[RMDB]
This 177-nucleotide RNA was probed chemically with DMS and 2A3. DMS adducts were read by reverse transcription with MarathonRT. For 2A3 the reverse transcriptase was SuperScript II with manganese. Source: RMDB library 15KREP, as collected in RNAgym. Conditions: 150 mM KOAc, 10 mM MgCl2 and 150 mM bicine (pH 8.5), 24 C. Reactivities are given for positions 27 through 126. The 2A3 profile rests on 3,469 reads.

RNA sequence: GGGAACGACUCGAGUAGAGUCGAAAAUCGUGCGUAUUUGGAUUCACGCACGACACAGCAGUUAACAAUCGAAGUCUUAGUGACUGUCGAUGGUGUAAAUUUUAGAACAGUCGUUCUAAAUAAUAAGCUCUUAAUCUACGUUCGCGUAGAUUAAGAGAAAAGAAACAACAACAACAAC
Reactivity to DMS in 0.01 (KOAc 150mM, MgCl2 10mM, bicine 150mM(pH8.5), 24C), signal-to-noise 4, nucleotides 027 to 126: u010c020g020u000g010c000g010u000a080u010u010u000g040g010a160u010u010c140a040c010g020c010a010c020g020a010c100a090c140a130g000c130a080g020u020u010a080a060c040a250a020u000c010g010a120a010g000u000c010u000u010a180g020u000g010a000c000u000g000u000c000g000a010u000g000g020u000g000u010a030a070a140u010u000u000u010a010g000a020a020c020a190g010u020c210g000u000u000c000u010a000a010a020u010a050a060u000a080a130g000
Reactivity to 2A3 in 0.01 (KOAc 150mM, MgCl2 10mM, bicine 150mM(pH8.5), 24C), signal-to-noise 5, nucleotides 027 to 126: u010c000g000u000g000c020g000u030a100u060u190u170g240g060a100u100u070c070a010c010g000c000a000c000g010a000c020a000c000a010g120c020a040g020u100u160a180a020c020a020a030u000c000g000a020a000g040u000c010u070u180a140g040u100g120a010c000u040g150u030c000g010a010u010g000g040u050g010u010a120a150a140u030u050u010u020a000g010a010a010c010a070g300u190c070g000u100u000c010u010a030a010a010u120a040a030u100a080a010g020